This 177-nucleotide RNA was probed chemically with DMS. The RNA was probed in 150 mM KOAc, 10 mM MgCl2 and 150 mM bicine (pH 8.5) at 24 C.
RNA sequence: GGGAACGACUCGAGUAGAGUCGAAAAGAUAUGGACGUGAUAUGAAGCCUUGGACCUCGGAAACGAGCUAGGCUGUAUACGUCCUAAGUCAAAGAUGGGUAGCCAUCUUCGGAUGGCUACCCAUCAAGCCAGAUUAACCGUUCGCGGUUAAUCUGGCAAAAGAAACAACAACAACAAC
Reactivity to DMS in 0.01 (KOAc 150mM, MgCl2 10mM, bicine 150mM(pH8.5), 24C), signal-to-noise 1, nucleotides 027 to 126: g020a030u010a300u000g000g010a020c010g000u000g010a010u000a050u000g020a150a090g000c000c010u020u010g000g030a140c300c040u000c000g000g010a180a060a190c040g010a010g010c040u000a000g000g020c010u000g000u000a010u000a000c010g010u020c010c000u000a010a050g000u020c000a140a170a050g010a010u000g000g020g000u000a030g040c000c000a010u000c000u000u010c130g030g000a010u000g010g020c010u000a000c010c000c000a010u000c010a090a070
For DMS the reverse transcriptase was MarathonRT.